[RMDB]
RNA sequence: GGGAACGACUCGAGUAGAGUCGAAAACGGGGGUUCAAGACACUACCCCGGGCCCUAGUGUCUUGAACGGGCCAGGCAUAUCGGUACGGUGGACAUGCGAAAGCAUGUCCAUCGUACUGAUAUGCCAGCACGUUCAUGGGUUCGCCCAUGAACGUGCAAAAGAAACAACAACAACAAC
Reactivity to DMS in 0.01 (KOAc 150mM, MgCl2 10mM, bicine 150mM(pH8.5), 24C), signal-to-noise 1, nucleotides 027 to 126: c080g010g000g010g020g020u000u000c030a020a030g000a040c000a010c030u010a110c090c070c060c030g000g000g020c010c010c020u000a010g020u000g010u000c010u000u000g000a010a040c040g020g040g010c040c060a120g030g000c010a010u000a000u000c010g000g020u000a010c010g010g010u000g010g010a000c000a010u000g000c000g000a130a080a180g000c000a010u000g010u000c000c000a000u000c000g020u000a000c000u000g000a000u000a000u000g010c000c010a000